Structure probing data (2A3) for a 207-nucleotide construct.
[RMDB]
RNA sequence: GGGAACGACUCGAGUAGAGUCGAAAACUCUCCAGAGUUCGCUCUGGAGAGAAAAACCUUUGUGCCUAUCCGUCUUUGAUCGUUGUUCGAGCCCAUUGGGCUCCAACGGGAGACGGUAGGCACUCUGGUAAAAGGGUGGUAAGUUCGCUUACCACCCGAAUCCGUCGUGGUUCGCCACGACGGAUUCAAAAGAAACAACAACAACAAC
Reactivity to 2A3 in 0.01 (KOAc 150mM, MgCl2 10mM, bicine 150mM(pH8.5), 24C), signal-to-noise 1, nucleotides 027 to 156: c020u000c000u000c000c000a000g020a010g030u140u110c200g050c090u020c000u030g010g010a000g000a000g020a000a000a000a000a000c010c000u020u000u000g000u000g070c000c000u040a100u300c040c000g030u000c030u000u150u120g180a240u150c030g030u000u020g040u100u280c100g000a000g000c000c020c090a300u200u300g030g000g020c000u020c010c000a010a000c000g000g060g000a030g010a000c020g000g010u000a000g000g010c010a000c000u010c000u000g000g000u070a130a260a090a000g060g070g000u010g020g000u010a000a010g010u010u210c300g000c090u000u000a000c000c000a000c000c010c000
The 2A3 profile rests on 692 reads.